[RMDB]
Chemical mapping of a 207-nucleotide RNA with DMS and 2A3.
RNA sequence: GGGAACGACUCGAGUAGAGUCGAAAAAAUGAGAUAUCACCUCACACCUAUCACCAUGGCUAACGUCAAAAAAAAACGUGUUGAUAAAGAUGUGGAGAAAUUUGAACCCUUGAACAUUGUUGGUAGGAAUGCAAAAUGGUUCAUCUGCUAUGGAAAAUAGCUAAUUAGCUUUCGAGCUAAUUAGCUAAAAAGAAACAACAACAACAAC
Reactivity to DMS in 0.01 (KOAc 150mM, MgCl2 10mM, bicine 150mM(pH8.5), 24C), signal-to-noise 2, nucleotides 027 to 156: a030a100u000g020a160g000a220u010a070u010c010a150c040c000u000c010a040c010a070c030c010u010a160u000c070a080c070c010a110u010g000g030c050u000a080a120c120g040u060c040a050a000a000a000a150a160a130a130a070c040g000u010g000u000u040g000a020u000a040a020a090g010a050u010g020u000g020g010a050g000a070a020a090u000u010u040g010a070a110c010c010c010u000u000g020a080a050c010a030u000u000g000u000u010g020g030u000a130g000g010a110a050u010g010c020a020a080a030a030u000g000g020u000u000c020a080u000c050u010g000c070u000a050u000g000g010a110a060a060a190
Reactivity to 2A3 in 0.01 (KOAc 150mM, MgCl2 10mM, bicine 150mM(pH8.5), 24C), signal-to-noise 3, nucleotides 027 to 156: a000a000u230g010a090g030a020u260a060u210c060a050c000c010u020c000a010c000a010c000c020u030a050u020c030a010c030c000a030u030g030g000c030u100a080a040c050g060u120c170a150a020a020a000a000a000a000a010a050c030g040u030g040u070u070g040a050u080a050a110a040g030a010u050g010u090g010g070a110g080a030a080a070u120u100u080g000a000a010c000c010c000u010u040g030a040a010c030a030u010u070g080u060u040g050g050u030a030g030g060a030a000u030g020c030a000a010a000a120u070g000g000u010u010c020a010u020c020u060g010c010u030a010u080g030g040a030a080a060a100
Values cover nucleotides 27 to 156. The reactions ran in a buffer of 150 mM KOAc, 10 mM MgCl2 and 150 mM bicine (pH 8.5), at 24 C. The data come from the RNA Mapping Database (RMDB), library OK3TST. For DMS, 2,578 sequencing reads were counted. The 2A3 profile rests on 1,569 reads.